RNA sequence: GGGAACGACUCGAGUAGAGUCGAAAAGGGACGCCUUUACAAGAAGAGGCUAGGUGGUAUUCCGGUGUGGGAUACUUGGUAAUAUGUAACGCUAAUUGCAUAAGAUUGUAGGACGGAAUUUACAGUCAAAACGGUCCUGCGUUCGCGCAGGACCGAAUCUAGUAGCAUGCUUCGGCAUGCUACUAGAAAAAGAAACAACAACAACAAC
Reactivity to 2A3 in 0.01 (KOAc 150mM, MgCl2 10mM, bicine 150mM(pH8.5), 24C), signal-to-noise 1, nucleotides 027 to 156: g000g000g070a040c050g020c010c010u000u070u090a200c100a140a040g080a130a030g000a000g000g000c030u000a040g000g190u030g000g000u010a050u040u090c010c020g080g070u220g050u240g010g060g030a030u010a030c040u080u110g060g030u030a070a070u030a100u080g030u060a010a000c040g010c090u040a100a000u140u010g010c030a000u060a120a030g010a040u160u000g040u030a010g000g060a000c040g030g080a010a010u100u100u080a040c040a010g030u100c050a010a090a080a090c020g000g000u010c000c000u000g010c010g030u040u060c240g000c000g000c070a000g010g160a000c000c000g000a000a000

Chemical mapping of a 207-nucleotide RNA with 2A3. Values are in units of 0.01, from 0 to 300, in steps of 10. The data come from the RNA Mapping Database (RMDB), library M2RFPK.